[RMDB]
RNA sequence: GGGAACGACUCGAGUAGAGUCGAAAACUGUAGCUCCUUUAGGCAUCACUCCUCUUGGGACACAGAUCAAAUCACCUGGCAUGAUCUGGGACAGCGACAUCUUGGGGACAGAGAUGGGCCAGGAAGGGCCUAUGAAGGACUUCGGUCCUUCAUAGGCAAAAGAAACAACAACAACAAC
Reactivity to DMS in 0.01 (KOAc 150mM, MgCl2 10mM, bicine 150mM(pH8.5), 24C), signal-to-noise 2, nucleotides 027 to 126: c020u060g020u010a120g020c050u010c000c020u000u000u000a140g020g020c110a100u010c070a130c150u000c020c010u000c060u000u000g010g020g030a140c140a130c000a020g000a030u010c010a030a050a190u000c080a160c020c030u000g000g000c040a260u000g000a040u000c010u000g020g020g010a120c100a050g000c040g020a080c120a080u000c010u000u010g020g020g010g010a130c110a150g010a070g000a060u000g010g000g010c040c010a000g000g040a100a070g010g000
Reactivity to 2A3 in 0.01 (KOAc 150mM, MgCl2 10mM, bicine 150mM(pH8.5), 24C), signal-to-noise 2, nucleotides 027 to 126: c010u000g090u140a040g010c030u070c030c070u040u080u160a120g030g090c040a110u050c000a040c040u020c000c000u050c040u040u020g010g030g060a030c020a010c010a110g010a030u040c010a010a100a090u100c000a040c040c020u020g020g010c030a010u040g020a020u050c010u000g010g000g050a030c030a060g100c050g080a020c000a060u060c030u030u060g030g000g000g020a040c020a020g110a010g000a020u050g020g050g040c020c000a020g000g030a000a020g050g060

The record gives the reactivity of an RNA of 177 nucleotides to DMS and 2A3. 2A3 adducts were read by reverse transcription with SuperScript II with manganese. DMS adducts were read by reverse transcription with MarathonRT. The 2A3 profile rests on 1,509 reads. The RNA was probed in 150 mM KOAc, 10 mM MgCl2 and 150 mM bicine (pH 8.5) at 24 C. The data come from the RNA Mapping Database (RMDB), library OK2TRN.